The record gives the reactivity of an RNA of 177 nucleotides to 2A3 and DMS. Source: RMDB library OK2TRN, as collected in RNAgym. The DMS profile rests on 1,538 reads. Conditions: 150 mM KOAc, 10 mM MgCl2 and 150 mM bicine (pH 8.5), 24 C. Reactivities are rounded to 0.1 and cut off at 0 and 3.

RNA sequence: GGGAACGACUCGAGUAGAGUCGAAAACAUAGCCAGGAGCCUGGCACUUCCUUUGGAAGGGACAAUGCCUUCUGGGUCUCCAGAUCAUUCCUGACCAGGACUUGCUGUUUCGGUGUGUCAGGGGGCACGGUUUUGUAGGAUUCGUCCUACAAAACCGAAAAGAAACAACAACAACAAC
Reactivity to 2A3 in 0.01 (KOAc 150mM, MgCl2 10mM, bicine 150mM(pH8.5), 24C), signal-to-noise 2, nucleotides 027 to 126: c040a030u210a030g050c000c000a040g190g040a050g100c010c010u030g010g000c010a030c000u030u030c010c000u110u050u210g060g010a050a030g060g000g020a020c070a050a070u050g030c030c000u030u000c010u050g000g000g120u130c110u050c100c000a030g010a090u120c020a060u070u090c000c010u040g000a050c000c020a000g080g020a090c020u080u160g100c080u110g110u130u070u120c000g050g030u070g010u000g020u040c010a030g020g000g000g030g010c070a020
Reactivity to DMS in 0.01 (KOAc 150mM, MgCl2 10mM, bicine 150mM(pH8.5), 24C), signal-to-noise 1, nucleotides 027 to 126: c060a100u010a100g010c020c020a050g020g000a090g000c050c070u000g000g020c000a050c010u010u020c010c020u010u010u010g010g010a030a200g010g000g000a040c090a030a100u000g010c150c050u010u070c010u010g010g000g010u010c120u010c020c010a090g000a060u010c030a120u000u000c010c010u000g000a160c030c010a080g000g020a050c130u000u010g000c070u010g020u000u000u000c110g000g000u010g020u020g000u000c000a040g000g000g000g000g000c070a160